[RMDB]
RNA sequence: GGGAACGACUCGAGUAGAGUCGAAAACAAAUACUGAAAAAUUACCUACUCCAAUAGAACUACCUUUAAAAGUUAAGGUUCAUGGUAAAGAUAGCCCCUUAAAGUAUUGGCCAAAGUUCGAUAAAAACGUAUCAUUUAACUUCGGUUAAAUGAUACGAAAAGAAACAACAACAACAAC
Reactivity to DMS in 0.01 (KOAc 150mM, MgCl2 10mM, bicine 150mM(pH8.5), 24C), signal-to-noise 2, nucleotides 027 to 126: c040a080a060a040u020a030c030u000g000a050a020a050a070a060u010u000a040c010c010u000a300c160u010c000c030a040a130u000a170g020a040a030c020u000a050c090c020u000u010u010a120a130a050a180g010u010u000a080a050g000g020u000u000c060a080u000g000g000u020a120a130a050g010a050u000a030g030c020c000c030c010u000u020a030a090a020g000u000a000u000u000g000g000c010c030a060a070a050g030u000u000c070g010a110u010a060a060a040a080a100
Reactivity to 2A3 in 0.01 (KOAc 150mM, MgCl2 10mM, bicine 150mM(pH8.5), 24C), signal-to-noise 2, nucleotides 027 to 126: c020a030a120a020u080a020c020u020g110a090a000a040a040a130u030u030a090c010c000u030a060c040u070c040c020a080a200u040a160g000a040a010c080u080a100c060c000u100u120u150a060a300a090a050g050u060u090a110a010g050g020u040u020c000a030u010g010g000u080a130a090a000g110a110u060a010g040c030c010c000c010u050u070a040a060a020g010u000a040u070u030g040g010c000c000a070a090a030g020u070u080c010g060a090u120a170a050a010a010a010

The record gives the reactivity of an RNA of 177 nucleotides to DMS and 2A3. For DMS the reverse transcriptase was MarathonRT. For DMS, 1,604 sequencing reads were counted. For 2A3 the reverse transcriptase was SuperScript II with manganese. As a SHAPE reagent, 2A3 marks flexible, mostly unpaired nucleotides at the ribose 2'-OH. The RNA was probed in 150 mM KOAc, 10 mM MgCl2 and 150 mM bicine (pH 8.5) at 24 C.